The record gives the reactivity of an RNA of 207 nucleotides to 2A3. The reactions ran in a buffer of 150 mM KOAc, 10 mM MgCl2 and 150 mM bicine (pH 8.5), at 24 C.
RNA sequence: GGGAACGACUCGAGUAGAGUCGAAAAGAAAAUAGACUUCGGUCUAUUUUCAGGUUUCCUAAGUCGAUGAGGGACAUGUCGUAUUCGGAAACGAAUAUCGACAACAGCCUACCCACCAUCGAUAUGGACAUGGCAUUUGGUCUUCGGACCAAAUGAAGUCCGAAUGUACUUUCGAGUACAUUCGGACAAAAGAAACAACAACAACAAC
Reactivity to 2A3 in 0.01 (KOAc 150mM, MgCl2 10mM, bicine 150mM(pH8.5), 24C), signal-to-noise 1, nucleotides 027 to 156: g020a000a000a010a010u000a000g000a000c030u050u050c300g110g000u000c000u020a010u000u000u020u000c000a000g120g000u050u050u050c000c000u020a190a020g010u000c000g000a000u010g010a060g050g000g020a020c010a030u060g010u010c020g000u000a000u000u000c000g030g020a110a040a050c000g000a000a000u020a080u190c080g040a000c000a000a030c000a030g080c040c050u090a150c130c020c000a100c010c010a030u000c000g040a000u040a140u110g030g000a020c080a210u170g110g000c020a000u000u010u000g000g000u020c000u000u000c220g190g010a000c000c000a000a000a000u000g000a010a030